[RMDB]
RNA sequence: GGGAACGACUCGAGUAGAGUCGAAAAUUUGUGGGCAAAAACAAUUGAAAGAACGAUUGGAUUUAUUUCUUCGAGCUGCUGUCCAGCGGAAUGAAGUCCCCGGACAUUGUUUAUUUUAUGGUCCCCCCGAUGCGACCUAGUUCGCUAGGUCGCAUCGAAAAGAAACAACAACAACAAC
Reactivity to 2A3 in 0.01 (KOAc 150mM, MgCl2 10mM, bicine 150mM(pH8.5), 24C), signal-to-noise 2, nucleotides 027 to 126: u120u140u220g080u110g010g000g050c000a160a050a000a000a000c020a000a030u020u060g070a240a240a120g060a220a040c020g060a050u090u150g060g000a060u000u140u000a150u090u130u050c020u070u030c000g050a050g020c020u040g030c100u180g110u120c070c010a020g010c040g040g080a020a030u120g040a040a030g120u070c020c010c010c050g000g030a020c040a030u030u010g030u070u080u070a230u220u100u020u040a080u060g060g000u000c000c000c000c020c020
Reactivity to DMS in 0.01 (KOAc 150mM, MgCl2 10mM, bicine 150mM(pH8.5), 24C), signal-to-noise 1, nucleotides 027 to 126: u000u030u010g030u070g000g000g000c170a000a020a010a060a090c020a040a030u000u000g020a130a060a100g000a140a140c020g030a000u010u010g000g000a130u050u010u070a100u020u000u030c000u020u000c070g010a180g000c000u000g000c000u000g030u010c090c040a050g030c110g000g000a030a000u010g010a070a130g000u000c050c000c040c140g000g000a050c150a070u030u010g000u000u010u010a070u060u020u000u000a000u030g000g010u010c000c000c030c050c060